About this RNA
This 207-nucleotide RNA was probed chemically with DMS and 2A3. Source: RMDB library OK3TST, as collected in RNAgym. The DMS profile rests on 3,754 reads. Conditions: 150 mM KOAc, 10 mM MgCl2 and 150 mM bicine (pH 8.5), 24 C. 2A3 adducts were read by reverse transcription with SuperScript II with manganese. Values cover nucleotides 27 to 156.

RNA sequence: GGGAACGACUCGAGUAGAGUCGAAAACUCAAUCACUACGGUGAUUGAGAAUGCUUACGCCUCAAUAAAGCUUGAGUUGAGUGCCUCAAGCAGAUAUAGACUGAAACAUUUAGUAUGGUCAAGCAGGGAGCAACAGCUCGAGUACGCUCGAGCUGAAUCGUGCCAUUAUAUUCGUAUAAUGGCACGAAAAAGAAACAACAACAACAAC
Reactivity to DMS in 0.01 (KOAc 150mM, MgCl2 10mM, bicine 150mM(pH8.5), 24C), signal-to-noise 2, nucleotides 027 to 156: c000u000c010a010a030u000c000a000c010u000a140c300g140g030u000g010a010u000u030g000a010g010a110a030u000g070c040u000u010a090c060g020c040c000u000c070a070a090u000a060a150a260g010c000u000u000g000a080g040u020u000g000a100g020u000g000c200c050u000c040a020a020g020c010a030g010a150u000a120u010a100g000a110c030u000g020a190a090a080c060a050u000u000u010a070g020u010a090u000g010g010u000c040a070a090g040c030a090g000g000g000a060g000c020a070a200c010a030g010c050u010c000g000a010g040u010a110c280g040c000u000c010g010a030g020c000u000g000a010a030
Reactivity to 2A3 in 0.01 (KOAc 150mM, MgCl2 10mM, bicine 150mM(pH8.5), 24C), signal-to-noise 6, nucleotides 027 to 156: c000u000c000a000a000u000c000a000c010u040a030c240g120g000u000g000a000u000u040g000a000g010a010a040u050g000c010u040u040a050c080g060c010c010u040c030a070a150u110a150a080a000g010c010u020u010g010a000g020u040u080g120a050g100u110g050c020c000u010c010a020a000g000c010a000g040a000u110a000u040a030g070a020c030u050g080a080a130a010c060a050u120u160u070a060g040u050a070u180g010g000u010c010a020a000g010c030a030g060g020g030a030g010c020a010a070c000a030g000c020u000c000g010a000g010u030a030c260g050c060u000c000g000a000g000c000u000g000a010a030